[RMDB]
RNA sequence: GGGAACGACUCGAGUAGAGUCGAAAACUAGCUAAGAAUAUCCUGCAUGUCGUAGGCCCAGAUGCCCGCGCUAAACAGGAUGUUUCUCUCCUUAGUAAGUGCUAUAAGGCUAUGAAUGCAUAUCCUCCGAUCAAUACGUUCGCGUAUUGAAAAAGAAACAACAACAACAAC
Reactivity to 2A3 in 0.01 (KOAc 150mM, MgCl2 10mM, bicine 150mM(pH8.5), 24C), signal-to-noise 9, nucleotides 027 to 129: c030u010a010g030c020u070a070a020g030a040a020u010a010u020c000c000u000g010c040a070u100g150u260c010g010u010a030g010g000c010c030c050a100g020a120u230g000c000c000c010g000c000g000c010u050a080a070a030c000a000g000g000a010u010g020u000u100u000c050u000c010u020c000c000u010u020a020g030u080a200a070g030u050g040c020u040a040u040a300a050g050g000c020u040a050u150g080a160a060u130g040c020a010u030a070u120c010c010u030c020c030g040a080
Reactivity to DMS in 0.01 (KOAc 150mM, MgCl2 10mM, bicine 150mM(pH8.5), 24C), signal-to-noise 9, nucleotides 027 to 129: c060u020a050g030c040u050a110a060g000a060a020u040a000u000c010c010u030g030c110a300u020g040u050c020g030u030a090g010g010c010c040c160a170g030a130u080g010c000c000c000g000c000g040c020u040a040a180a180c020a040g000g000a040u010g000u000u040u020c050u030c070u010c070c020u010u000a030g000u040a050a090g040u000g020c030u030a070u050a100a090g020g010c000u000a050u050g040a090a080u060g020c050a000u030a090u030c000c010u040c050c050g030a170
Source: RMDB library 15KLIB, as collected in RNAgym. Structure probing data (2A3 and DMS) for a 170-nucleotide construct. DMS (dimethyl sulfate) methylates the pairing face of unpaired adenines and cytosines. For DMS the reverse transcriptase was MarathonRT.